[RMDB]
RNA sequence: GGGAACGACUCGAGUAGAGUCGAAAAGGAAGAACACCCAUUGCGCCAUUCACAGAAGGAAUAACCACAAACUUGGCAUCGCCUUCCCAAACAGGAUGCCUGGCUGCAACCACACUAACGUGCAGCGCCUCCGGCACCCGUUCGCGGGUGCCGGAGGAAAAGAAACAACAACAACAAC
Reactivity to 2A3 in 0.01 (KOAc 150mM, MgCl2 10mM, bicine 150mM(pH8.5), 24C), signal-to-noise 1, nucleotides 027 to 126: g050g040a010a090g020a020a030c030a040c000c000c000a000u000u120g010c030g000c000c000a030u120u130c040a040c030a030g110a090a120g030g070a000a080u160a070a170c010c020a030c000a180a030a030c070u230u190g010g030c000a000u000c000g160c110c020u010u060c000c090c050a050a050a050c050a010g020g000a030u030g050c120c000u000g040g000c000u000g040c000a000a140c080c020a040c000a040c070u180a220a000c070g110u070g000c070a000g040c020g020